[RMDB]
RNA sequence: GGGAACGACUCGAGUAGAGUCGAAAAGAUAUGGAUCGUCUAAGGCCGAUAAGUCCCAUGUCGGAAACGACAUUGGACUUUUGACGGCUAUGACGAUCCUAAGUCAAACGGUCCGUUCGCGGACCGACACACUUGCCUAGUUCGCUAGGCAAGUGUGAAAAGAAACAACAACAACAAC
Reactivity to 2A3 in 0.01 (KOAc 150mM, MgCl2 10mM, bicine 150mM(pH8.5), 24C), signal-to-noise 3, nucleotides 027 to 126: g020a010u050a030u110g000g000a000u010c020g050u020c030u110a280a300g100g000c020c100g170a170u140a300a010g000u000c000c020c010a010u010g000u000c020g050g000a030a020a060c000g000a000c010a000u000u000g000g010a000c000u030u040u020u080g300a190c140g000g000c010u010a020u040g000a000c000g000a000u000c000c000u000a000a000g030u000c020a020a050a150c030g010g010u000c030c010g040u070u080c300g020c060g060g000a000c000c000g020a020
Reactivity to DMS in 0.01 (KOAc 150mM, MgCl2 10mM, bicine 150mM(pH8.5), 24C), signal-to-noise 2, nucleotides 027 to 126: g000a040u010a300u010g000g000a000u000c010g020u000c000u010a130a300g010g000c010c000g040a130u000a010a020g000u000c010c010c110a020u000g010u010c000g000g000a050a110a160c000g010a010c010a010u000u000g000g000a040c000u000u000u000u000g000a200c130g000g020c000u000a250u000g000a010c000g000a020u000c000c000u000a000a030g000u000c040a070a080a170c010g020g010u000c000c010g050u000u010c250g040c010g010g000a010c010c000g020a130

An RNA of 177 nucleotides, treated with 2A3 and DMS and read out base by base.
It was measured as part of the RMDB library TTRDES.
2A3 adducts were read by reverse transcription with SuperScript II with manganese.
In probing experiments dimethyl sulfate is read out at A N1 and C N3, which are open when not base-paired.
For DMS the reverse transcriptase was MarathonRT.